RNA sequence: GGGAACGACUCGAGUAGAGUCGAAAACUACUAUUGGGCCAAUUACGUCCUAGUUCAAUUGUGAGAUGGGCCUAGAUGGACGCUUAGCGAGUUCUGAGGCUUUGUCAAAAUAGUCUUGAGCCAUGUCCCAACUAGGCUGAUUCGUCAGCCUAGUUGGAAAAGAAACAACAACAACAAC
Reactivity to 2A3 in 0.01 (KOAc 150mM, MgCl2 10mM, bicine 150mM(pH8.5), 24C), signal-to-noise 2, nucleotides 027 to 126: c010u090a020c010u060a110u110u120g050g010g000c030c020a180a240u160u070a110c080g030u030c020c020u020a040g020u000u110c030a060a090u110u110g030u060g080a090g000a050u070g040g000g070c000c000u020a040g020a040u070g020g080a020c050g000c100u080u070a000g000c050g110a080g110u090u030c050u130g080a020g000g000c000u120u090u040g070u060c020a070a040a020a050u040a050g040u000c010u030u060g010a020g010c000c000a040u040g040u010c040
Reactivity to DMS in 0.01 (KOAc 150mM, MgCl2 10mM, bicine 150mM(pH8.5), 24C), signal-to-noise 2, nucleotides 027 to 126: c030u000a060c060u000a090u000u010g010g000g010c020c100a090a170u010u000a110c220g020u000c030c000u000a060g000u000u000c060a040a070u020u000g010u000g010a130g020a090u000g000g000g010c010c040u000a030g000a050u000g010g010a040c010g000c040u000u020a060g000c130g010a100g000u000u000c000u000g010a090g020g000c010u010u000u010g040u010c130a040a080a070a040u000a030g000u000c030u000u000g000a060g000c020c040a050u000g000u000c100